Structure probing data (2A3) for a 207-nucleotide construct. 2A3 adducts were read by reverse transcription with SuperScript II with manganese. The RNA was probed in 150 mM KOAc, 10 mM MgCl2 and 150 mM bicine (pH 8.5) at 24 C. Source: RMDB library OK3TST, as collected in RNAgym.
RNA sequence: GGGAACGACUCGAGUAGAGUCGAAAACUCUGGGAUGUCCAGUGAACAUCAUGGCUCCACCCAGCAGGGUGGCAUCUGCCAGGCUGGUCUGUGGGGCAGGGCUGAGGUCUGGGCUGGGUGGUCAUGACGGGGAAGCAGCCAGCCCUCCUUGAUGAGAACUCACGAUCCAUUUCGAUGGAUCGUGAGUAAAAGAAACAACAACAACAAC
Reactivity to 2A3 in 0.01 (KOAc 150mM, MgCl2 10mM, bicine 150mM(pH8.5), 24C), signal-to-noise 1, nucleotides 027 to 156: c040u020c010u000g090g020g050a190u210g090u140c010c000a090g000u100g130a010a030c040a050u090c040a040u100g050g000c010u020c000c000a000c000c000c000a020g000c060a090g080g090g000u020g030g040c010a110u090c100u150g000c000c000a010g000g030c000u010g000g050u090c040u090g030u020g010g010g070g000c000a020g000g050g040c120u110g030a010g010g070u100c160u200g020g000g020c010u010g000g040g040u060g000g120u160c020a090u130g170a040c090g010g000g000g000a030a050g000c000a000g120c000c000a000g030c010c000c020u000c000c010u040u040g000a090u090g030a050g030a100